[RMDB]
RNA sequence: GGGAACGACUCGAGUAGAGUCGAAAAUCUGAUGAAGACUUUUACAAUGCUGUUAGUAAUGCGCAUAGGUUUAACAUAUUGUUGUCAGAUUUGUCUUUCAAUAAUGUUGUGACUACAUAUGCGAAACCAGAGGAAAAGAUGUCAACCCAUGAUAUGGACAAAAGAACUUCUUCGGAAGUUCUUUUGUAAAAGAAACAACAACAACAAC
Reactivity to 2A3 in 0.01 (KOAc 150mM, MgCl2 10mM, bicine 150mM(pH8.5), 24C), signal-to-noise 2, nucleotides 027 to 156: u040c010u100g010a010u110g060a040a070g090a080c020u090u100u060u100a110c110a090a060u090g030c010u040g020u130u060a070g070u130a160a090u200g070c010g000c000a010u020a050g030g000u000u030u080a040a000c000a000u020a000u020u040g010u010u010g000u010c010a010g020a070u070u040u220g150u100c010u000u060u030c030a020a010u060a040a020u040g050u160u030g020u070g030a020c020u010a010c070a070u050a020u000g000c000g000a070a020a030c030c020a020g010a070g080g080a010a030a020a040g050a040u120g030u020c020a070a060c010c010c010a000u050g040a010u060a050u140g030g000
Reactivity to DMS in 0.01 (KOAc 150mM, MgCl2 10mM, bicine 150mM(pH8.5), 24C), signal-to-noise 3, nucleotides 027 to 156: u010c020u010g010a170u000g000a170a080g000a080c010u000u010u010u000a110c090a110a140u020g000c010u000g010u000u000a160g020u000a080a060u010g020c060g040c020a050u000a040g010g000u010u000u000a140a030c030a070u000a040u000u000g010u000u010g000u000c030a070g010a090u010u010u020g020u000c010u000u000u000c030a020a050u000a030a040u000g010u000u000g010u000g000a150c050u000a020c030a040u000a010u000g010c020g010a080a020a090c030c030a080g000a120g010g000a060a060a080a120g010a120u010g010u000c040a060a120c040c000c010a090u010g010a120u010a140u000g000g010

The data come from the RNA Mapping Database (RMDB), library OK3TST. An RNA of 207 nucleotides, treated with 2A3 and DMS and read out base by base. Reactivities are given for positions 27 through 156. The reactions ran in a buffer of 150 mM KOAc, 10 mM MgCl2 and 150 mM bicine (pH 8.5), at 24 C. For 2A3, 1,750 sequencing reads were counted. 2A3 adducts were read by reverse transcription with SuperScript II with manganese.